[RMDB]
Chemical mapping of a 207-nucleotide RNA with 2A3.
Source: RMDB library OK3TST, as collected in RNAgym.
Reactivities are given for positions 27 through 156.
2A3 adducts were read by reverse transcription with SuperScript II with manganese.
RNA sequence: GGGAACGACUCGAGUAGAGUCGAAAAGGGAUAAGGGAGUACUCUUAUCCCCACGUGGUUGGUGACAACCACGAUUAACCGGAGGUGACCCGCUCCCACCUCUCUGAGUGCUCUCCACGCCUUCGGGCCUGGUUUGCACGCAGGUAACAGAGCUCAACCAUCAUAUCCGUUUCGACGGAUAUGAUGGAAAAGAAACAACAACAACAAC
Reactivity to 2A3 in 0.01 (KOAc 150mM, MgCl2 10mM, bicine 150mM(pH8.5), 24C), signal-to-noise 2, nucleotides 027 to 156: g000g010g000a010u030a010a010g020g010g000a120g150u180a300c010u000c000u000u000a000u000c010c000c000c000a020c000g010u000g000g010u010u000g030g030u080g050a060c000a000a000c030c000a000c000g000a010u110u100a090a090c050c080g070g000a010g010g000u040g010a080c040c000c090g000c040u020c010c040c000a010c000c010u000c010u000c010u010g000a020g040u000g000c000u010c000u020c000c000a000c010g010c000c010u030u110c290g060g000g000c000c000u010g020g000u000u000u010g000c010a000c000g020c000a000g000g040u020a060a020c100a200g030a000g040c000u020c040a050a110